An RNA of 207 nucleotides, treated with 2A3 and read out base by base. The RNA was probed in 150 mM KOAc, 10 mM MgCl2 and 150 mM bicine (pH 8.5) at 24 C. For 2A3 the reverse transcriptase was SuperScript II with manganese. The 2A3 profile rests on 538 reads. It was measured as part of the RMDB library RSTRND.
RNA sequence: GGGAACGACUCGAGUAGAGUCGAAAAAGGGUCAGAGCACCUCGUAAAUCCAACUGAAAAACUUUAGUCGCAAACGACGAAAACUACGCCCUGGCCGCUUAAGGUCCAGGACUCACACUAGCCUGUUCAUGGGCUAGGCCGGGUCAAACCGGCAGUGCGAGUACAAGACCUUCGGGUCUUGUACUCGAAAAGAAACAACAACAACAAC
Reactivity to 2A3 in 0.01 (KOAc 150mM, MgCl2 10mM, bicine 150mM(pH8.5), 24C), signal-to-noise 1, nucleotides 027 to 156: a000g030g000g000u040c020a010g060a060g160c190a000c010c000u000c020g050u080a040a040a100u000c010c010a020a040c050u040g140a080a060a000a030a000c040u140u120u120a090g000u010c020g030c070a120a190a130c060g020a020c000g010a030a000a020a050c060u070a040c080g060c000c010c000u000g000g000c010c000g030c050u190u190a180a090g080g000u000c010c020a000g000g060a000c050u100c000a010c010a010c000u000a000g000c010c010u090g020u260u110c130a270u300g010g000g000c020u000a000g010g010c000c000g030g000g010u080c020a030a070a110c010c000g000g000c000a000g030u050g030